The record gives the reactivity of an RNA of 177 nucleotides to 2A3 and DMS. Reactivities are rounded to 0.1 and cut off at 0 and 3. 2A3 adducts were read by reverse transcription with SuperScript II with manganese.
[RMDB]
RNA sequence: GGGAACGACUCGAGUAGAGUCGAAAAUUAAAGCGACCAAUCACCUCAUGAGGGAUCGUGUUGUUACGCAUAGGAAUAACGCGUAAGUUGCGCUUGGCAUGCUCUACCGACUUGCGAAUCGCUUCAGCCUAUCCCUGGGUUUCGACCCAGGGAUAGGAAAAGAAACAACAACAACAAC
Reactivity to 2A3 in 0.01 (KOAc 150mM, MgCl2 10mM, bicine 150mM(pH8.5), 24C), signal-to-noise 1, nucleotides 027 to 126: u130u060a030a070a000g000c030g010a010c070c050a010a090u070c040a120c050c010u030c020a080u140g170a140g040g000g060a060u060c010g000u020g030u080u040g060u000u000a010c000g000c100a120u140a070g150g000a110a140u070a070a030c040g030c020g050u060a050a040g050u050u090g040c120g010c040u000u020g000g000c020a040u080g080c030u000c000u040a070c050c030g030a030c030u020u020g000c020g090a000a050u050c020g000c000u050u020c040a040g110
Reactivity to DMS in 0.01 (KOAc 150mM, MgCl2 10mM, bicine 150mM(pH8.5), 24C), signal-to-noise 2, nucleotides 027 to 126: u010u030a090a070a040g030c040g000a100c040c050a110a050u020c040a110c020c010u000c170a090u000g030a110g000g000g000a040u010c020g010u000g000u000u010g010u000u000a050c030g050c150a110u000a140g020g030a120a130u010a060a050c070g000c010g010u000a050a070g000u010u020g000c050g010c090u000u000g000g030c120a040u000g000c030u000c030u010a080c090c040g020a000c040u000u000g010c010g010a030a050u000c070g000c010u000u000c020a090g000